[RMDB]
RNA sequence: GGGAACGACUCGAGUAGAGUCGAAAAGCCGGGCGCUGUGGCGUGUGCCUGUAAUCCAGCUACUUGGAGGCUUGGGCUGUCGGAUCGCUUGAGUCCAGGAGUUCUGGGCUGCACUGAGCUAUGUCGAUCGGGUGUCCGCACUAAGUUCGGUAUCAAUCUUCCUAUAAGCGUUCGCGCUUAUAGGAAGAAAAGAAACAACAACAACAAC
Reactivity to 2A3 in 0.01 (KOAc 150mM, MgCl2 10mM, bicine 150mM(pH8.5), 24C), signal-to-noise 2, nucleotides 027 to 156: g070c040c010g000g010g020c000g000c040u080g000u040g060g040c020g020u080g000u010g000c020c000u000g050u110a050a030u010c020c020a020g040c020u070a090c000u160u130g040g030a050g030g000c000u060u090g040g000g000c010u030g050u090c030g040g010a030u000c050g000c000u030u060g040a000g040u000c000c000a000g000g080a140g030u230u200c010u030g000g000g000c030u030g020c050a090c150u090g000a000g020c020u070a040u070g130u130c020g020a040u040c000g070g000g000u090g010u010c000c000g040c000a000c050u090a060a050g010u020u050c030g030g020u110a080u140c050a030a040u010

About this RNA:
The record gives the reactivity of an RNA of 207 nucleotides to 2A3.